[RMDB]
RNA sequence: GGGAACGACUCGAGUAGAGUCGAAAAGCGCGUCCUCCUUCGGAUGCCCAGGUCGGACCGCGAGGAGGUGGAGAUGCCAUGCCGACCCGAAGAGGAAAGAAGGACAGGAGACGCGAACCUGUGAGUGCUCGAUACCUAGGUUCGCCUAGGUAUCGAGAAAAGAAACAACAACAACAAC
Reactivity to 2A3 in 0.01 (KOAc 150mM, MgCl2 10mM, bicine 150mM(pH8.5), 24C), signal-to-noise 1, nucleotides 027 to 126: g090c010g020c040g000u000c000c050u000c010c010u030u020c000g220g000a100u160g070c010c000c020a010g000g000u000c000g050g000a050c070c000g000c040g000a040g060g050a030g100g060u150g050g090a170g030a150u200g070c050c000a040u110g000c010c000g020a000c000c020c000g120a160a110g130a110g070g010a040a040a040g030a010a000g020g010a010c150a080g100g010a050g030a060c000g050c010g010a030a050c000c010u030g020u010g110a100g070u220g070
Reactivity to DMS in 0.01 (KOAc 150mM, MgCl2 10mM, bicine 150mM(pH8.5), 24C), signal-to-noise 1, nucleotides 027 to 126: g010c060g020c020g000u000c000c030u000c010c000u040u000c010g000g000a180u010g030c010c020c020a120g010g000u000c090g010g020a120c040c120g010c180g010a100g020g030a120g020g000u000g000g000a160g050a130u010g020c010c000a060u010g070c020c000g040a030c020c000c050g000a090a060g010a080g000g000a080a160a210g010a060a070g000g010a040c130a040g000g000a090g000a060c080g000c010g000a060a050c000c000u000g000u000g000a110g010u010g010